[RMDB]
The record gives the reactivity of an RNA of 177 nucleotides to DMS and 2A3. It was measured as part of the RMDB library OK2TST. Values cover nucleotides 27 to 126. Conditions: 150 mM KOAc, 10 mM MgCl2 and 150 mM bicine (pH 8.5), 24 C.
RNA sequence: GGGAACGACUCGAGUAGAGUCGAAAAUUCUUCGCCCACCUUGAAGGACACCGAACUGUUGGCGAUACGGAUAACGCGCGUGUCCUGCGCGCUCAAAAGCUCCAGGCUGCGGCGCAUGGCGGCAAAAUAUCAUCGUCGUAUUCGUACGACGAUGAUAAAAAGAAACAACAACAACAAC
Reactivity to DMS in 0.01 (KOAc 150mM, MgCl2 10mM, bicine 150mM(pH8.5), 24C), signal-to-noise 3, nucleotides 027 to 126: u000u000c040u000u010c140g030c050c000c070a170c050c040u010u000g040a120a030g000g000a050c010a020c010c030g010a140a100c070u000g030u010u010g010g010c050g010a170u030a070c090g010g010a100u000a040a090c160g020c010g000c160g030u000g010u000c010c010u000g000c090g040c010g000c000u020c080a050a150a120a060g010c000u010c140c240a110g000g000c010u000g000c300g000g020c020g010c010a070u010g010g010c300g000g000c100a050a050a100a150
Reactivity to 2A3 in 0.01 (KOAc 150mM, MgCl2 10mM, bicine 150mM(pH8.5), 24C), signal-to-noise 1, nucleotides 027 to 126: u020u000c010u050u100c020g020c000c020c030a070c010c030u060u100g190a140a000g030g000a010c020a030c030c030g090a120a060c090u110g010u070u080g090g030c070g040a090u030a090c040g010g050a020u010a120a000c020g040c000g020c030g050u000g020u000c000c000u000g010c000g010c000g030c010u050c050a130a270a040a040g000c040u160c110c020a060g100g000c040u010g000c030g000g050c020g070c040a020u060g050g000c010g020g010c030a000a000a050a100